[RMDB]
RNA sequence: GGGAACGACUCGAGUAGAGUCGAAAAGAUAUGGAAUUGGUAGGGAGUAUGUCGGAAACGAUUUGUAUACGAAGAACUACCCAAUUCCUAAGUCAAACAUCAACACCGGUUCGCCGGUGUUGAUGAAGUAUGUUGGGCAGUUCGCUGCCCAACAUACAAAAGAAACAACAACAACAAC
Reactivity to DMS in 0.01 (KOAc 150mM, MgCl2 10mM, bicine 150mM(pH8.5), 24C), signal-to-noise 2, nucleotides 027 to 126: g010a030u010a300u000g020g030a010a020u000u000g010g000u010a020g040g000g000a100g000u010a010u010g010u000c010g000g000a090a080a170c010g030a010u010u020u010g010u010a050u000a030c010g000a130a180g000a100a150c010u000a000c100c030c090a000a000u000u000c000c000u010a040a100g010u000c010a110a140a220c010a030u000c000a010a000c000a030c000c000g000g020u000u030c300g010c000c000g010g010u000g000u000u000g000a000u000g010a040a070
Reactivity to 2A3 in 0.01 (KOAc 150mM, MgCl2 10mM, bicine 150mM(pH8.5), 24C), signal-to-noise 1, nucleotides 027 to 126: g020a010u040a030u130g000g020a010a010u000u000g000g000u010a010g000g000g020a040g010u030a000u060g030u000c010g060g080a030a000a100c020g020a010u000u090u300g290u100a050u000a040c030g150a300a080g010a070a000c000u020a030c050c060c020a010a010u000u010c000c000u010a110a020g020u000c040a000a110a050c000a000u000c000a000a000c010a020c010c010g010g010u090u080c300g060c080c000g010g090u000g000u000u010g000a000u010g000a000a000
Structure probing data (DMS and 2A3) for a 177-nucleotide construct. Source: RMDB library TTRDEL, as collected in RNAgym. For 2A3 the reverse transcriptase was SuperScript II with manganese. For 2A3, 1,995 sequencing reads were counted. DMS adducts were read by reverse transcription with MarathonRT. The DMS profile rests on 1,006 reads.